[RMDB]
RNA sequence: GGGAACGACUCGAGUAGAGUCGAAAAGAUAUGGAGUAUCAUACGGCUCAACAGCAUGAUUCGGAAACGAAUCAUGACAUGAGCGGUAUGAGUACUCCUAAGUCAAACUUACGGUUCGCCGUAAGAACAUAGAGUCAUAGUUCGCUAUGACUCUAUGAAAAGAAACAACAACAACAAC
Reactivity to DMS in 0.01 (KOAc 150mM, MgCl2 10mM, bicine 150mM(pH8.5), 24C), signal-to-noise 9, nucleotides 027 to 126: g010a060u010a300u010g010g010a020g020u000a040u000c000a010u000a010c000g000g020c000u000c000a040a090c280a250g010c010a000u000g000a010u000u010c000g020g000a130a090a240c010g010a020a000u000c000a000u000g010a020c080a210u000g010a010g010c000g000g010u000a000u000g000a040g030u000a000c000u000c000c000u000a010a080g010u000c030a120a140a210c010u000u000a010c010g000g000u000u020c300g020c010c000g010u000a000a010g010a120a270
Reactivity to 2A3 in 0.01 (KOAc 150mM, MgCl2 10mM, bicine 150mM(pH8.5), 24C), signal-to-noise 9, nucleotides 027 to 126: g050a010u090a060u220g010g000a000g010u020a000u040c000a000u010a030c050g300g000c010u010c010a070a140c060a200g090c000a010u010g000a010u000u000c010g030g030a060a090a070c010g010a000a010u000c010a000u010g030a030c020a080u070g000a000g000c060g000g010u000a000u010g010a020g000u010a000c000u000c000c000u000a070a010g010u000c030a050a060a110c010u010u000a010c010g010g170u040u090c300g050c120c010g000u000a000a010g000a020a010